[RMDB]
RNA sequence: GGGAACGACUCGAGUAGAGUCGAAAAGAAAGGAUAAUGCAGCCCGGCAUUGUCCAAAAGAAAACGGGCGAAAGAAAGAAAGCUAGUCGCAGCCCGGUGACUAGCAAAGAAAACGGGCGAAAAGAAAGGAUAAGAGAUUCUUCGGAAUCUCUUAUCCAAAAGAAACAACAACAACAAC
Reactivity to 2A3 in 0.01 (KOAc 150mM, MgCl2 10mM, bicine 150mM(pH8.5), 24C), signal-to-noise 3, nucleotides 027 to 126: g100a030a160a010g000g000a000u000a000a000u000g000c010a010g000c060c000c000g010g000c000a030u000u000g000u000c000c000a010a060a070a050g060a010a100a000a010c030g020g030g000c230g120a140a120a030g140a030a040a020g060a060a100a000g070c000u000a000g000u000c000g000c040a030g010c000c010c000g000g000u000g000a000c000u010a000g000c010a010a070a000g080a020a120a010a010c010g000g000g010c050g020a040a120a050a010g110a020a050a020
Reactivity to DMS in 0.01 (KOAc 150mM, MgCl2 10mM, bicine 150mM(pH8.5), 24C), signal-to-noise 2, nucleotides 027 to 126: g010a060a120a110g000g020a040u020a030a000u000g000c010a220g000c000c000c000g000g000c000a010u020u080g000u000c000c000a080a050a100a150g000a220a000a120a100c040g000g000g000c050g000a140a080a090g010a190a030a150g000a070a200a190g000c000u000a000g000u000c010g030c070a130g020c020c020c000g000g050u000g000a010c000u000a000g000c000a100a020a080g000a060a050a080a080c030g020g000g010c010g010a010a060a110a120g000a060a220a190
About this RNA: This 177-nucleotide RNA was probed chemically with 2A3 and DMS. The DMS profile rests on 1,909 reads. The 2A3 profile rests on 3,051 reads. Reactivities are rounded to 0.1 and cut off at 0 and 3.